[RMDB]
RNA sequence: GGGAACGACUCGAGUAGAGUCGAAAAGAGGUUCUUCCCUCCCCCGGCGAGCUGCUUCUUCUUGUUCUCGAGGGCCUUCCUUCGUCGGUGAUCCCGCCUCUCCUCGUCGGUGAAUCCUCCCCCGGGGUACGAGGAAUGUUCGCAUUCCUCAAAAGAAACAACAACAACAAC
Reactivity to 2A3 in 0.01 (KOAc 150mM, MgCl2 10mM, bicine 150mM(pH8.5), 24C), signal-to-noise 9, nucleotides 027 to 129: g060a030g030g020u120u070c030u080u060c020c000c000u020c000c010c000c000c010g030g010c020g010a020g010c030u070g030c010u080u030c000u080u020c020u080u170g070u120u030c040u020c040g030a090g010g030g010c000c010u060u070c030c010u050u060c020g110u010c030g020g040u060g020a050u050c010c010c000g030c000c010u000c010u010c010c000u020c000g050u010c030g010g020u050g030a030a050u040c000c010u020c000c000c000c000c000g010g010g000g010u040a040c090
Reactivity to DMS in 0.01 (KOAc 150mM, MgCl2 10mM, bicine 150mM(pH8.5), 24C), signal-to-noise 7, nucleotides 027 to 129: g000a030g000g000u010u010c050u020u020c030c020c010u000c000c000c000c000c000g020g020c020g020a060g010c040u020g000c050u010u010c000u030u010c050u010u010g000u030u010c020u000c040g000a110g000g010g010c080c080u010u020c010c060u000u000c050g040u030c070g000g000u000g000a110u020c030c020c010g040c050c040u000c030u000c000c000u000c040g040u010c080g000g000u020g030a090a070u020c050c020u030c000c010c010c000c020g000g000g000g040u030a020c140
Structure probing data (2A3 and DMS) for a 170-nucleotide construct.
For DMS, 108,024 sequencing reads were counted.